[RMDB]
RNA sequence: GGGAACGACUCGAGUAGAGUCGAAAACACAUGAGAUGUACUGGGUCUCUGGGGCAAAGAGCAACAUCAUAAAAAGUGUGUCCACCACAAGUCAGCUCCUCCUGGGACGCAUGGAUGGCCCCAGGAGUCCGAUGAACCUGUUCGCAGGUUCAUCGGAAAAAGAAACAACAACAACAAC
Reactivity to DMS in 0.01 (KOAc 150mM, MgCl2 10mM, bicine 150mM(pH8.5), 24C), signal-to-noise 1, nucleotides 027 to 126: c090a000c050a130u000g030a060g040a030u010g000u000a080c090u030g020g010g000u000c000u020c020u000g000g000g000g000c030a110a050a030g000a010g020c040a110a090c020a000u000c030a160u080a120a120a040a170a110g010u000g050u000g000u000c000c070a190c110c070a050c180a030a010g000u050c000a120g010c050u000c010c000u000c000c050u000g030g000g000a060c120g060c000a010u040g000g000a160u000g000g000c030c000c000c000a000g010g000a090g000
Reactivity to 2A3 in 0.01 (KOAc 150mM, MgCl2 10mM, bicine 150mM(pH8.5), 24C), signal-to-noise 3, nucleotides 027 to 126: c020a000c000a070u120g020a040g070a120u100g050u170a160c090u210g120g000g070u070c000u000c000u010g060g020g030g010c080a040a130a000g020a000g000c070a030a040c000a000u040c010a000u300a180a190a040a090a090g040u000g000u010g010u050c040c070a100c010c000a140c110a110a090g140u180c040a010g020c000u000c000c000u020c000c000u010g000g000g040a040c040g040c030a030u130g140g200a070u060g110g000c000c000c000c000a000g000g000a000g030

An RNA of 177 nucleotides, treated with DMS and 2A3 and read out base by base. As a SHAPE reagent, 2A3 marks flexible, mostly unpaired nucleotides at the ribose 2'-OH. The reactions ran in a buffer of 150 mM KOAc, 10 mM MgCl2 and 150 mM bicine (pH 8.5), at 24 C. For 2A3 the reverse transcriptase was SuperScript II with manganese. The DMS profile rests on 1,024 reads. Reactivities are given for positions 27 through 126.